[RMDB]
The record gives the reactivity of an RNA of 177 nucleotides to 2A3 and DMS.
Reactivities are given for positions 27 through 126.

RNA sequence: GGGAACGACUCGAGUAGAGUCGAAAAGACGCCUGUGUGGCGAAUCGAGCAAUGGUAUAAGCCGCAAUAGAAGAUGAGAUGGAAGCGGCAAGAUAGAAUGCUCGCAAAUAGAUCCAUCUCACAGAGACGCGUACUAAAUAUUCGUAUUUAGUACGCGAAAAGAAACAACAACAACAAC
Reactivity to 2A3 in 0.01 (KOAc 150mM, MgCl2 10mM, bicine 150mM(pH8.5), 24C), signal-to-noise 7, nucleotides 027 to 126: g130a030c020g050c000c000u220g070u080g110u250g190g010c010g020a020a060u090c020g000a010g010c030a070a220u200g060g070u160a100u050a130a040g010c000c000g000c030a060a090u120a210g160a190a010g080a190u030g000a000g000a000u000g000g010a120a030g000c000g000g000c000a010a010g060a020u140a030g140a180a080u070g000c040u080c030g000c050a060a110a010u130a070g070a030u000c000c000a000u000c000u000c000a010c010a000g100a000g020a040
Reactivity to DMS in 0.01 (KOAc 150mM, MgCl2 10mM, bicine 150mM(pH8.5), 24C), signal-to-noise 4, nucleotides 027 to 126: g010a140c060g010c030c000u020g000u040g010u050g010g020c020g040a080a130u030c020g000a050g010c050a070a070u030g000g010u030a030u020a090a220g000c000c000g010c020a230a080u040a070g040a130a110g000a110u010g010a000g010a000u000g000g000a040a150g000c010g000g020c000a010a010g030a100u010a080g000a130a120u010g000c000u000c000g040c270a120a040a070u050a110g000a140u000c000c000a000u010c000u020c000a020c100a160g020a160g000a160

For DMS the reverse transcriptase was MarathonRT.
Values are in units of 0.01, from 0 to 300, in steps of 10.
The DMS profile rests on 7,177 reads.
It was measured as part of the RMDB library OK1LIB.